RNA sequence: GGGAACGACUCGAGUAGAGUCGAAAAAAUGAGGCCUAUGAGCUUCCUAUCCAGCAGUGGUGAAGGCCUUGCCCUGGGUGGCAAGAUACUUGCUCUAUGGUCACAGCUCAGCCACGGGAAGCUGUGCGACCUCAGGUGAGCAAUUCACUGUCCAGUAGUCGACUAUACGAUUCGUCGUAUAGUCGACAAAAGAAACAACAACAACAAC
Reactivity to 2A3 in 0.01 (KOAc 150mM, MgCl2 10mM, bicine 150mM(pH8.5), 24C), signal-to-noise 2, nucleotides 027 to 156: a000a050u140g000a000g070g000c060c030u220a230u210g160a090g000c000u090u000c040c000u170a220u060c010c050a040g020c020a020g020u010g010g000u040g080a130a030g120g000c000c000u000u000g020c020c020c040u030g140g050g090u200g040g000c020a000a000g000a040u240a160c030u040u020g000c010u000c000u080a080u150g000g030u020c000a000c030a010g000c020u130c080a010g040c030c000a040c020g030g040g000a050a010g000c030u010g000u010g050c150g030a130c000c000u080c120a020g060g040u010g000a020g000c070a030a000u070u020c020a010c050u010g080u040c010c060a040g030u140a010

An RNA of 207 nucleotides, treated with 2A3 and read out base by base.
Reactivities are rounded to 0.1 and cut off at 0 and 3.
It was measured as part of the RMDB library OK3TST.